Conditions: 150 mM KOAc, 10 mM MgCl2 and 150 mM bicine (pH 8.5), 24 C.
The record gives the reactivity of an RNA of 177 nucleotides to 2A3 and DMS.
The data come from the RNA Mapping Database (RMDB), library M2PK50.
Reactivities are given for positions 27 through 126.
RNA sequence: GGGAACGACUCGAGUAGAGUCGAAAACGCGUCAGAUUCGUCUGACGCGAAAGCAUAGAACAGCGCUAUCAUGUAUUAUAGUUCUAUGCAACUAAAGCGCUAAAACGAUACCGUUCGCGGUAUCGAAACUUAUCGUUUCGUUCGCGAAACGAUAAGUAAAAGAAACAACAACAACAAC
Reactivity to 2A3 in 0.01 (KOAc 150mM, MgCl2 10mM, bicine 150mM(pH8.5), 24C), signal-to-noise 4, nucleotides 027 to 126: c000g010c000g000u000c000a010g020a040u030u080c110g060u000c110u000g000a000c000g000c000g020a000a000a000g000c010a000u000a020g000a030a030c030a040g020c000g000c070u070a040u230c090a110u220g230u250a150u180u150a120u100a050g000u010u000c000u000a020u020g000c010a020a000c010u100a060a030a020g050c020g000c070u080a010a120a040a010c010g010a000u000a000c000c000g020u010u050c220g000c000g070g010u010a000u000c000g010a020a010
Reactivity to DMS in 0.01 (KOAc 150mM, MgCl2 10mM, bicine 150mM(pH8.5), 24C), signal-to-noise 2, nucleotides 027 to 126: c040g050c000g000u010c010a000g010a050u010u010c250g000u000c030u000g010a000c000g050c000g000a020a070a100g020c010a020u000a040g000a040a010c040a080g020c030g020c030u000a110u000c200a110u020g030u000a080u010u020a110u000a070g000u000u000c020u000a000u000g000c000a080a030c070u000a020a090a080g000c030g030c030u030a110a030a080a200c000g000a020u000a000c000c000g000u020u030c170g010c000g000g000u000a010u000c000g000a030a040